An RNA of 177 nucleotides, treated with 2A3 and DMS and read out base by base. The RNA was probed in 150 mM KOAc, 10 mM MgCl2 and 150 mM bicine (pH 8.5) at 24 C. For 2A3 the reverse transcriptase was SuperScript II with manganese. Values cover nucleotides 27 to 126. Reactivities are rounded to 0.1 and cut off at 0 and 3.

[RMDB]
RNA sequence: GGGAACGACUCGAGUAGAGUCGAAAAGAUAUGGAUCGGACUCAGCCUAAGACAGGCACUCGGAAACGAGUGCUCGAGGAACUACUGAGUGCGAUCCUAAGUCAAAACGGAAUGUUCGCAUUCCGAAGGAUAUAUCCGGGUUCGCCCGGAUAUAUCCAAAAGAAACAACAACAACAAC
Reactivity to 2A3 in 0.01 (KOAc 150mM, MgCl2 10mM, bicine 150mM(pH8.5), 24C), signal-to-noise 1, nucleotides 027 to 126: g030a000u040a020u090g010g000a020u030c020g010g020a030c000u030c000a090g020c050c130u130a180a030g100a060c070a060g000g000c030a010c000u000c010g050g000a030a050a040c000g010a000g000u000g010c000u000c000g060a030g010g000a090a100c170u290a020c030u300g000a000g000u030g090c000g020a000u000c000c000u000a020a010g020u000c010a010a070a020a130c010g010g010a020a010u040g060u100u120c270g000c120a010u010u000c050c000g000a080a060
Reactivity to DMS in 0.01 (KOAc 150mM, MgCl2 10mM, bicine 150mM(pH8.5), 24C), signal-to-noise 2, nucleotides 027 to 126: g020a000u000a300u010g000g020a020u000c000g020g000a010c010u000c000a000g000c100c100u020a150a090g020a140c300a120g000g010c000a020c000u000c010g020g000a070a090a180c010g000a000g020u000g010c000u000c030g010a070g010g000a070a070c130u020a270c010u010g000a010g020u000g000c000g000a010u020c000c000u000a010a040g000u000c030a060a060a050a130c050g020g000a030a010u000g000u000u020c200g020c010a000u000u000c000c000g000a040a100